Conditions: 150 mM KOAc, 10 mM MgCl2 and 150 mM bicine (pH 8.5), 24 C. Chemical mapping of a 177-nucleotide RNA with 2A3 and DMS. 2A3 adducts were read by reverse transcription with SuperScript II with manganese. The 2A3 profile rests on 3,222 reads.
RNA sequence: GGGAACGACUCGAGUAGAGUCGAAAAAAAAGAUAUGGAGAGGAUUGUCAGCUCGAAUGGAACUAUGGACUCGGAAACGAGUCCACGAAUUCCAUAGAGCUUGGAUUUAUCCUCUCCUAAGUCAAAACGUAGCUAUAUUGUUCGCAAUAUAGCUACGAAAAGAAACAACAACAACAAC
Reactivity to 2A3 in 0.01 (KOAc 150mM, MgCl2 10mM, bicine 150mM(pH8.5), 24C), signal-to-noise 1, nucleotides 027 to 126: a000a040a010a050g050a030u090a020u080g000g000a030g000a010g000g010a000u010u010g000u020c030a010g010c010u010c000g040a170a160u020g000g030a010a030c020u060a100u080g010g000a000c010u020c020g010g040a030a100a040c010g010a000g000u020c010c000a000c020g020a030a300u010u000c000c000a000u000a000g000a010g000c000u010u050g000g020a000u050u130u060a030u000c000c000u000c000u020c000c010u000a000a010g030u020c020a020a000a100a010
Reactivity to DMS in 0.01 (KOAc 150mM, MgCl2 10mM, bicine 150mM(pH8.5), 24C), signal-to-noise 3, nucleotides 027 to 126: a080a070a090a070g000a040u000a300u000g000g010a020g030a030g020g000a000u000u010g000u000c010a060g000c010u000c000g020a170a150u010g020g000a010a010c080u010a120u000g040g000a010c010u000c000g010g000a100a140a200c020g020a010g010u000c000c020a010c020g010a020a120u000u000c000c000a020u010a280g000a030g020c000u000u040g010g010a010u000u010u000a000u000c000c010u000c000u000c000c000u010a030a050g000u010c010a070a050a090a190